[RMDB]
This 177-nucleotide RNA was probed chemically with 2A3 and DMS. 2A3 adducts were read by reverse transcription with SuperScript II with manganese. The RNA was probed in 150 mM KOAc, 10 mM MgCl2 and 150 mM bicine (pH 8.5) at 24 C. For DMS the reverse transcriptase was MarathonRT.
RNA sequence: GGGAACGACUCGAGUAGAGUCGAAAAUAAGAGCAUGUACGAAUCACGAUAUGAGAGUUCCUGGUGAAUCCCGGGUACAAGGAAAGGUAUUAAUCUCCCACUGCGUUGCCUUGCAGUAGGGAUAUAAAGCAUACUCUGAAUUCGUUCAGAGUAUGCUAAAAGAAACAACAACAACAAC
Reactivity to 2A3 in 0.01 (KOAc 150mM, MgCl2 10mM, bicine 150mM(pH8.5), 24C), signal-to-noise 1, nucleotides 027 to 126: u140a060a020g030a030g000c070a040u060g040u110a020c030g050a080a040u100c050a040c100g030a040u030a070u210g100a090g010a010g060u040u000c000c000u030g100g010u020g060a080a040u020c000c020c000g010g000g000u010a030c040a010a020g090g010a140a050a030g080g000u080a100u130u100a160a060u050c040u000c020c000c000a010c000u010g000c020g110u100u130g030c020c020u040u100g020c010a000g020u100a200g010g000g020a020u030a020u020a030a050
Reactivity to DMS in 0.01 (KOAc 150mM, MgCl2 10mM, bicine 150mM(pH8.5), 24C), signal-to-noise 4, nucleotides 027 to 126: u010a090a070g010a110g010c030a050u000g010u010a080c070g010a090a090u000c050a040c050g020a120u010a110u000g010a110g020a230g000u000u000c010c020u000g000g010u010g010a080a080u000c040c020c010g000g000g000u000a040c080a070a040g010g000a050a040a060g010g010u000a060u010u010a090a060u010c130u010c010c000c010a070c040u000g000c010g010u000u010g010c150c130u000u000g010c020a010g000u000a050g020g010g000a010u000a020u010a020a070